[RMDB]
Conditions: 150 mM KOAc, 10 mM MgCl2 and 150 mM bicine (pH 8.5), 24 C. Structure probing data (2A3 and DMS) for a 177-nucleotide construct. For 2A3, 8,498 sequencing reads were counted. The data come from the RNA Mapping Database (RMDB), library M2PK90. The DMS profile rests on 15,595 reads.
RNA sequence: GGGAACGACUCGAGUAGAGUCGAAAAUAAAAGAGCGUACGACUCACAAAGACUGUACGACAGUCUGACUCUCUCGUACGCUUGUUCAACGAGAGAGAGAGUGCGUUGGAACAAGUGUGAUAAAAAACUAGCUAAGUAAGUUCGCUUACUUAGCUAGAAAAGAAACAACAACAACAAC
Reactivity to 2A3 in 0.01 (KOAc 150mM, MgCl2 10mM, bicine 150mM(pH8.5), 24C), signal-to-noise 5, nucleotides 027 to 126: u180a000a100a000a010g050a010g030c030g030u050a010c040g110a100c050u020c050a040c020a020a080a000g000a000c010u020g030u140a090c170g130a100c210a010g000u000c000u000g020a020c000u000c010u000c010u000c010g020u040a030c040g020c000u010u050g010u010u030c020a030a010c020g010a010g000a010g000a000g000a000g010a020g060u060g070c040g030u040u080g100g020a060a010c030a090a070g030u050g030u060g140a080u300a040a100a000a000a010a020
Reactivity to DMS in 0.01 (KOAc 150mM, MgCl2 10mM, bicine 150mM(pH8.5), 24C), signal-to-noise 9, nucleotides 027 to 126: u010a070a070a090a120g010a050g000c020g020u000a030c030g010a060c050u010c040a090c110a100a150a030g000a010c000u000g010u000a120c280g010a140c030a000g010u000c000u000g000a200c060u000c010u000c020u000c010g010u000a050c050g010c030u000u000g010u000u000c070a060a050c050g000a040g000a050g000a030g010a080g010a090g020u000g000c070g020u000u010g000g010a060a040c070a050a060g010u000g020u000g010a130u030a010a060a060a060a080a100